[RMDB]
RNA sequence: GGGAACGACUCGAGUAGAGUCGAAAAAGAUUCGCAUUAGAACCGGAAUUUUUAAUAGGAAGAGCCGGAAGAGGUAUGGCAGAGGCUGAAAGCCCUGUCGUCGAUGCUUAUAAUGGUUCUCCUGAGUACACAUGUCAUAAUUCGUUAUGACAUGUGUAAAAGAAACAACAACAACAAC
Reactivity to 2A3 in 0.01 (KOAc 150mM, MgCl2 10mM, bicine 150mM(pH8.5), 24C), signal-to-noise 9, nucleotides 027 to 126: a000g090a060u050u030c030g010c090a040u080u130a050g030a100a020c030c020g010g020a020a020u020u030u020u030u110a290a250u160a080g040g030a060a110g020a020g050c000c000g020g010a040a040g050a010g030g030u160a020u100g000g000c010a010g080a150g090g010c040u120g220a200a050a000g010c000c000c000u000g010u000c000g000u020c030g030a020u090g020c000u040u030a070u040a120a080u130g020g000u010u000c010u010c010c000u020g020a020g050u010
Reactivity to DMS in 0.01 (KOAc 150mM, MgCl2 10mM, bicine 150mM(pH8.5), 24C), signal-to-noise 5, nucleotides 027 to 126: a060g000a050u000u000c040g000c070a090u010u010a110g000a140a140c160c030g010g010a040a010u010u000u000u010u020a070a130u030a060g000g010a030a040g000a030g010c000c000g010g010a150a090g010a050g010g010u010a020u000g000g010c000a010g010a150g030g000c000u000g010a100a100a180g010c000c000c000u000g000u000c010g010u000c150g010a090u020g010c000u000u000a070u010a070a190u050g000g000u000u000c000u000c000c010u010g010a100g010u010

Chemical mapping of a 177-nucleotide RNA with 2A3 and DMS.
The reactions ran in a buffer of 150 mM KOAc, 10 mM MgCl2 and 150 mM bicine (pH 8.5), at 24 C.
Reactivities are given for positions 27 through 126.
The data come from the RNA Mapping Database (RMDB), libraries RFM100 and RFMREP.